[RMDB]
RNA sequence: GGGAACGACUCGAGUAGAGUCGAAAAUUAAAGCCAUUCGUGGCUUUAAACUCUGGUGUCCCGAAAAGGCUCGUGCGCGAUCCCACGCGAACCAGAUUUCGAUUAAGGAUAAGUUCGCUUAUCCUAAAGUUCCACUUACAUUCGUGUAAGUGGAACUAAAAGAAACAACAACAACAAC
Reactivity to DMS in 0.01 (KOAc 150mM, MgCl2 10mM, bicine 150mM(pH8.5), 24C), signal-to-noise 2, nucleotides 027 to 126: u010u000a000a010a000g000c000c000a030u010u010c170g030u000g020g010c000u000u000u000a000a050a130c210u000c050u010g000g040u010g010u010c040c000c010g000a060a060a140a190g010g000c030u000c060g000u000g010c020g010c030g010a100u010c000c000c000a230c030g010c020g020a080a040c020c040a040g000a210u020u000u000c090g010a170u010u010a090a030g000g000a000u000a000a010g020u000u020c250g000c010u000u000a020u000c000c000u000a030a060